[RMDB]
RNA sequence: GGGAACGACUCGAGUAGAGUCGAAAAAACUACUUGGGCCAUAGAGUUGCGUGGUGUCUGCAUACUAGGGAAGAUAUACCUAGCGGAAUGGAGAUUGACCAUAUCAACGGCGACCCUUCUGACAACAGGAUUUGCAAUCUUCGGUUAGCUACUCCUAAACAAGGACGUAAUUCGUUACGUCCUUGUUAAAAGAAACAACAACAACAAC
Reactivity to 2A3 in 0.01 (KOAc 150mM, MgCl2 10mM, bicine 150mM(pH8.5), 24C), signal-to-noise 3, nucleotides 027 to 156: a000a000c050u100a010c020u030u030g030g030g010c050c010a090u040a040g150a000g030u000u010g040c020g050u010g020g010u030g050u020c020u060g080c010a000u000a040c000u000a030g000g030g100a120a040g050a120u150a040u070a260c000c000u020a010g020c060g050g060a050a040u040g090g010a000g010a020u050u130g110a050c000c000a000u020a080u140c020a020a010c020g030g030c000g010a060c020c010c000u080u030c030u060g070a050c050a070a020c030a090g050g010a060u080u050u060g010c010a030a070u080c020u070u070c100g040g000u030u040a010g010c000u020a020c030u020c000c040u020a050
Reactivity to DMS in 0.01 (KOAc 150mM, MgCl2 10mM, bicine 150mM(pH8.5), 24C), signal-to-noise 2, nucleotides 027 to 156: a100a020c020u010a020c020u010u010g010g060g050c020c020a170u010a110g010a140g000u000u000g000c090g050u000g000g020u000g010u000c020u000g040c070a130u000a010c020u010a010g010g000g010a070a130g060a160u010a190u000a080c010c000u000a030g000c000g020g000a120a080u010g000g010a040g040a110u010u000g020a090c040c010a110u000a240u000c040a070a070c070g020g010c010g000a020c010c010c020u000u000c030u000g000a130c060a080a090c050a050g020g020a130u000u000u010g060c060a120a070u000c000u000u000c030g020g020u000u000a120g020c020u000a140c040u000c020c000u000a120